[RMDB]
RNA sequence: GGGAACGACUCGAGUAGAGUCGAAAAAAGAGAUUUAUUUUGACUUUGGCCCCAACGGGGAGUUUGCUUACCUGUACAGCCAGUGCUACGAGCUCACCACCAACGAAUACGUCUACCGCCUAUGCCACACGGGGUAGGGAUUCGUCCCUACCCCGUGAAAAGAAACAACAACAACAAC
Reactivity to DMS in 0.01 (KOAc 150mM, MgCl2 10mM, bicine 150mM(pH8.5), 24C), signal-to-noise 1, nucleotides 027 to 126: a020a030g000a300g000a130u000u000u010a130u020u000u000u010g000a100c060u000u000u000g000g010c120c010c050c090a080a080c170g010g000g000g000a020g010u000u000u010g000c060u010u000a050c000c010u010g000u000a030c120a120g000c080c020a040g010u000g010c010u010a070c060g000a030g000c060u000c050a060c040c050a110c080c070a000a080c080g010a060a090u000a080c040g000u000c050u010a080c040c040g000c030c020u000a160u010g000c040c050a110